[RMDB]
RNA sequence: GGGAACGACUCGAGUAGAGUCGAAAAGAUAUGGAUGAACUACCCACCGUCGGAUAACGUUGAAACUUACUUAAAUCGGAAACGAUUUAAGUAAGUGGAGUUAGAAGACGAGGUUCAUCCUAAGUCACUUAGAACAUCAGUUCGCUGAUGUUCUAAGAAAAGAAACAACAACAACAAC
Reactivity to DMS in 0.01 (KOAc 150mM, MgCl2 10mM, bicine 150mM(pH8.5), 24C), signal-to-noise 4, nucleotides 027 to 126: g010a070u010a200u000g020g010a010u020g000a000a000c000u000a110c020c010c040a300c160c000g000u010c000g010g020a300u000a000a010c000g030u000u000g030a210a180a050c010u010u000a000c010u000u000a000a000a000u000c000g010g000a090a100a160c020g020a000u000u000u000a020a010g010u010a000a000g030u000g000g000a070g000u000u000a010g000a300a170g000a020c000g000a030g010g000u000u000c000a020u000c010c000u000a000a060g000u010c110a200
Reactivity to 2A3 in 0.01 (KOAc 150mM, MgCl2 10mM, bicine 150mM(pH8.5), 24C), signal-to-noise 2, nucleotides 027 to 126: g200a120u300a220u300g020g000a000u000g000a000a000c020u170a300c090c030c000a000c040c010g000u000c010g000g050a050u010a030a000c020g060u160u040g010a050a050a000c000u000u000a000c000u000u010a000a000a010u000c010g010g000a070a060a120c020g000a020u020u010u010a000a000g000u000a000a000g000u000g000g000a050g000u020u000a020g020a050a020g000a020c000g000a010g000g000u000u010c000a020u010c000c010u000a050a020g180u070c030a000
About this RNA: The data come from the RNA Mapping Database (RMDB), library TTRINS. Structure probing data (DMS and 2A3) for a 177-nucleotide construct. For 2A3 the reverse transcriptase was SuperScript II with manganese. The reactions ran in a buffer of 150 mM KOAc, 10 mM MgCl2 and 150 mM bicine (pH 8.5), at 24 C. For 2A3, 5,715 sequencing reads were counted. For DMS, 3,022 sequencing reads were counted.